[RMDB]
RNA sequence: GGGAACGACUCGAGUAGAGUCGAAAAGAAAGAAAGACGGACUAAAAAUCGCGAAAAGAAAAAGAAAGAAUAAGCGUCGAACGCGUCGACGGGUCCGAAACAACGCAAAGAAGCGUAGAAAAGAAAAAUGGGAUCAUAUCUUCGGAUAUGAUCCCAUAAAAGAAACAACAACAACAAC
Reactivity to DMS in 0.01 (KOAc 150mM, MgCl2 10mM, bicine 150mM(pH8.5), 24C), signal-to-noise 1, nucleotides 027 to 126: g020a170a050a160g040a140a200a010g000a060c000g040g000a020c000u000a030a120a090a080a110u010c020g000c000g000a090a020a100a100g000a120a210a100a070a000g010a060a020a070g000a070a070u000a020a200g000c000g020u000c030g000a050a070c020g020c020g000u000c040g000a000c060g090g070g000u000c000c000g000a080a010a140c040a040a050c020g000c010a050a090a160g020a170a080g000c000g110u000a090g000a000a060a050a030g020a000a040a080a060
Reactivity to 2A3 in 0.01 (KOAc 150mM, MgCl2 10mM, bicine 150mM(pH8.5), 24C), signal-to-noise 1, nucleotides 027 to 126: g060a000a220a000g150a000a010a010g020a150c000g000g000a090c000u090a000a000a000a300a300u120c000g000c000g040a000a000a000a300g290a040a070a020a150a000g120a000a230a000g040a000a300u300a220a000g000c000g000u000c000g000a000a090c010g000c000g060u000c000g000a000c000g000g000g000u000c000c000g000a000a000a000c040a000a000c020g000c050a000a300a000g000a000a000g020c000g070u000a090g130a000a020a000a000g230a040a040a040a040
Source information: An RNA of 177 nucleotides, treated with DMS and 2A3 and read out base by base. DMS adducts were read by reverse transcription with MarathonRT. It was measured as part of the RMDB library OK1LIB. The reactions ran in a buffer of 150 mM KOAc, 10 mM MgCl2 and 150 mM bicine (pH 8.5), at 24 C. 2A3 adducts were read by reverse transcription with SuperScript II with manganese.